[RMDB]
RNA sequence: GGGAACGACUCGAGUAGAGUCGAAAAAUUUAACUCAAUUCUGACACUAACUGUCUGGAGCAGAUCCUACAGGUAAAGGGCUCAGUCCUAAAAGACUGCCCCACUUCAGACACGAAUCGCAAGUCCAGGUUGUCACCUGUGCUUCUGACCAACUGGAAGUAUGCUGGUGAUUCGUCACCAGCAUACUAAAAGAAACAACAACAACAAC
Reactivity to 2A3 in 0.01 (KOAc 150mM, MgCl2 10mM, bicine 150mM(pH8.5), 24C), signal-to-noise 2, nucleotides 027 to 156: a000u140u100u050a100a000c050u030c090a060a100u240u110c010u090g110a030c020a070c140u170a180a040c020u100g040u020c030u030g000g010a030g000c070a030g030a060u120c030c010u070a070c090a060g070g070u080a110a110a030g040g000g000c070u100c250a010g000u000c000c100u130a190a160a060a000g020a000c000u010g000c000c000c000c040a030c000u000u060c040a000g000a060c040a000c120g060a040a120u170c070g000c080a070a000g000u000c010c020a010g000g070u030u030g160u170c040a030c050c000u000g040u090g030c000u100u040c010u070g160a180c070c030a100a150c040u030g010g100a000
An RNA of 207 nucleotides, treated with 2A3 and read out base by base. Reactivities are rounded to 0.1 and cut off at 0 and 3. The reactions ran in a buffer of 150 mM KOAc, 10 mM MgCl2 and 150 mM bicine (pH 8.5), at 24 C.